[RMDB]
RNA sequence: GGGAACGACUCGAGUAGAGUCGAAAAAUAAGUGCUCGUCCUCCUCGUAAACAGGGCUGCGGCGUGCCGGCUUAUGAGGCCCGUAAGAUUGAUGACCCAGAGAGUUAAAACUCCGGAACUCGGCGUGCAUCUGAACGCCUUUCGAGGCGUUCAGAUGAAAAGAAACAACAACAACAAC
Reactivity to 2A3 in 0.01 (KOAc 150mM, MgCl2 10mM, bicine 150mM(pH8.5), 24C), signal-to-noise 2, nucleotides 027 to 126: a000u240a080a040g080u080g100c000u010c010g000u000c000c000u010c000c000u030c060g070u080a110a100a090c020a050g010g100g000c060u040g010c020g020g020c010g010u010g000c000c000g020g000c000u040u090a030u250g050a110g060g000c050c000c020g000u030a020a080g050a100u040u170g040a040u050g020a100c040c000c050a040g090a000g010a000g060u050u190a090a080a030a030c020u020c020c010g000g040a070a060c030u000c000g000g000c000g020u060g020
Reactivity to DMS in 0.01 (KOAc 150mM, MgCl2 10mM, bicine 150mM(pH8.5), 24C), signal-to-noise 2, nucleotides 027 to 126: a090u020a060a040g010u010g000c050u000c040g000u020c020c040u020c070c010u000c080g000u010a050a080a130c120a100g040g000g020c050u010g000c010g000g000c050g000u000g050c040c080g000g000c040u000u010a060u030g000a280g000g000c000c000c020g020u020a050a060g010a130u020u040g010a070u020g000a040c100c000c020a080g010a080g000a010g010u030u090a040a040a100a140c080u010c000c010g030g010a090a130c070u010c000g000g000c060g000u010g030